[RMDB]
RNA sequence: GGGAACGACUCGAGUAGAGUCGAAAAGUCUAUUUAAUGUCUGCCACCCAACACUGGCCAGACGUCAUCUCGGUUACAGCGGUGAUCUUUCCAUCGCAAUUGAUAAUUAUGUUGAGUGGUCCGAUUAUCGAGGAAAAUCGUUCGCGAUUUUCCUCGAAAAAGAAACAACAACAACAAC
Reactivity to DMS in 0.01 (KOAc 150mM, MgCl2 10mM, bicine 150mM(pH8.5), 24C), signal-to-noise 1, nucleotides 027 to 126: g000u020c070u000a150u020u010u020a070a110u000g000u010c000u030g050c070c000a110c120c000c080a050a060c160a100c130u030g000g000c100c080a040g000a050c120g010u000c210a120u000c060u000c000g050g000u000u020a030c180a080g000c110g020g000u000g000a110u000c100u060u040u030c090c000a010u010c000g060c030a170a000u000u020g020a000u020a110a110u030u020a130u020g000u000u000g000a080g000u000g000g000u000c000c020g060a100u000u000a180